[RMDB]
RNA sequence: GGGAACGACUCGAGUAGAGUCGAAAAAAAAAAGACAAAAAUUAGCUAGAUGUGGUGACAUGUGCUUGUACUUCCAGCUACUCAGGAGGCUGAGGUGGGAGGAUCAUCUGAGCCUGGGAAGUUGAGGCUGCAGUGAGCCAUGAUUGUGCCACUGCCAUAAAAUACGGUGAUUCGUCACCGUAUUUUAAAAAGAAACAACAACAACAAC
Reactivity to 2A3 in 0.01 (KOAc 150mM, MgCl2 10mM, bicine 150mM(pH8.5), 24C), signal-to-noise 2, nucleotides 027 to 156: a000a000a000a000a000a000g150a060c150a060a110a040a020a060u150u040a080g030c020u060a050g020a090u070g040u010g050g030u040g020a040c030a050u070g090u100g050c020u060u030g100u100a030c010u040u000c020c010a020g030c030u060a070c000u040c020a030g000g080a030g140g000c030u060g050a010g000g050u030g040g010g000a070g000g030a100u120c020a010u000c020u060g010a010g020c000c030u040g040g030g050a050a080g000u020u080g030a040g030g010c050u050g040c050a000g010u020g030a020g010c030c010a050u100g080a220u050u120g040u100g020c000c000a000c000u030g000c000c010a030
Reactivity to DMS in 0.01 (KOAc 150mM, MgCl2 10mM, bicine 150mM(pH8.5), 24C), signal-to-noise 2, nucleotides 027 to 156: a010a040a040a090a070a080g030a220c100a050a050a070a030a100u010u010a080g020c040u000a050g010a120u010g020u000g000g020u010g000a060c050a090u000g020u000g000c010u000u010g010u000a030c050u000u000c020c010a070g010c020u000a060c050u000c020a120g010g010a090g020g000c050u010g000a030g040g020u000g020g010g040a120g000g000a070u010c040a010u000c020u000g010a040g010c020c020u000g040g020g010a050a080g010u000u000g000a070g000g000c050u000g030c000a050g020u000g000a100g050c000c020a100u000g010a200u000u010g030u010g010c020c000a080c010u000g010c020c090a170
Structure probing data (2A3 and DMS) for a 207-nucleotide construct.
Reactivities are given for positions 27 through 156.
For DMS, 4,657 sequencing reads were counted.